RNA sequence: GGGAACGACUCGAGUAGAGUCGAAAAUGUGUCCUAGGGAAUUGGAAGGUCAUCCUUCACAGGAUCGUGUGGAAGUCCUGCUCGGGACGGAAGCAUUAAAACCAUUCGAGCUAGUCAAUGCGUGGCGUUACCUCCAGGUUCUUCGGAACCUGGAGAACAUAGGAUACACCUUCGGGUGUAUCCUAUGAAAAGAAACAACAACAACAAC
Reactivity to DMS in 0.01 (KOAc 150mM, MgCl2 10mM, bicine 150mM(pH8.5), 24C), signal-to-noise 1, nucleotides 027 to 156: u000g020u000g000u000c000c020u000a130g020g040g030a070a100u000u000g020g020a080a060g030g010u000c120a120u000c000c070u020u000c060a060c020a030g010g030a030u000c100g040u000g050u000g030g000a250a240g010u020c030c010u000g050c070u000c240g000g000g000a040c060g000g000a220a210g020c010a050u000u000a040a100a050a110c000c010a130u000u000c060g000a060g010c050u010a160g000u010c070a090a120u020g000c080g000u030g000g020c020g010u010u000a120c120c000u000c000c020a030g000g000u000u000c000u030u000c300g030g000a010a000c000c010u000g000g000a000g000a000a040
Reactivity to 2A3 in 0.01 (KOAc 150mM, MgCl2 10mM, bicine 150mM(pH8.5), 24C), signal-to-noise 1, nucleotides 027 to 156: u110g040u010g000u020c010c010u030a040g000g010g070a020a110u090u150g070g000a050a020g040g010u160c040a060u110c040c000u050u070c060a080c030a010g030g010a040u060c050g020u040g010u020g070g030a000a060g020u000c020c010u040g070c180u170c150g010g000g000a000c020g010g010a000a010g000c010a020u040u130a010a070a010a050c050c010a020u050u100c060g050a050g060c000u040a020g030u070c100a100a070u040g040c090g090u060g040g000c020g010u020u070a060c000c000u000c000c000a000g000g030u000u010c000u030u070c120g050g000a000a000c000c000u000g000g000a000g000a000a000
Conditions: 150 mM KOAc, 10 mM MgCl2 and 150 mM bicine (pH 8.5), 24 C. Structure probing data (DMS and 2A3) for a 207-nucleotide construct. For 2A3 the reverse transcriptase was SuperScript II with manganese.